The record gives the reactivity of an RNA of 177 nucleotides to 2A3 and DMS. Values cover nucleotides 27 to 126. For DMS the reverse transcriptase was MarathonRT. The RNA was probed in 150 mM KOAc, 10 mM MgCl2 and 150 mM bicine (pH 8.5) at 24 C. The 2A3 profile rests on 940 reads. The DMS profile rests on 813 reads.
[RMDB]
RNA sequence: GGGAACGACUCGAGUAGAGUCGAAAACAGUGAUGGAAACAUCACUGAAAAACCGGAAACGGACAUGACGAUCACGCGCAUGUCGGGAAACCGUAAACGCGAAAAGAGCUAGCGAAAGCUAGCUCAACCUCGGGCUAUAGUUCGCUAUAGCCCGAGGAAAAGAAACAACAACAACAAC
Reactivity to 2A3 in 0.01 (KOAc 150mM, MgCl2 10mM, bicine 150mM(pH8.5), 24C), signal-to-noise 2, nucleotides 027 to 126: c010a000g000u000g010a010u000g000g000a040a060a000c000a000u000c000a000c000u000g010a060a000a000a010a010c060c010g030g020a180a120a000c070g080g000a000c000a030u100g020a060c050g020a090u280c180a050c180g130c000g000c000a010u010g010u000c000g060g040g000a190a130a000c010c000g060u060a090a100a020c080g000c050g110a000a000a050a160g000a010g020c000u000a000g000c000g090a160a050a000g000c000u000a000g000c000u000c000a000a000
Reactivity to DMS in 0.01 (KOAc 150mM, MgCl2 10mM, bicine 150mM(pH8.5), 24C), signal-to-noise 1, nucleotides 027 to 126: c000a000g000u000g000a010u000g000g000a170a090a240c000a000u000c000a000c090u000g050a010a120a030a300a180c150c000g010g010a250a110a270c010g000g000a050c000a000u000g030a080c010g040a240u110c090a120c210g000c150g000c000a210u000g000u030c050g000g000g000a040a150a300c000c000g010u000a000a030a040c170g000c130g050a160a090a090a200g000a080g000c000u000a000g000c040g000a140a050a250g030c000u000a000g010c050u000c000a000a120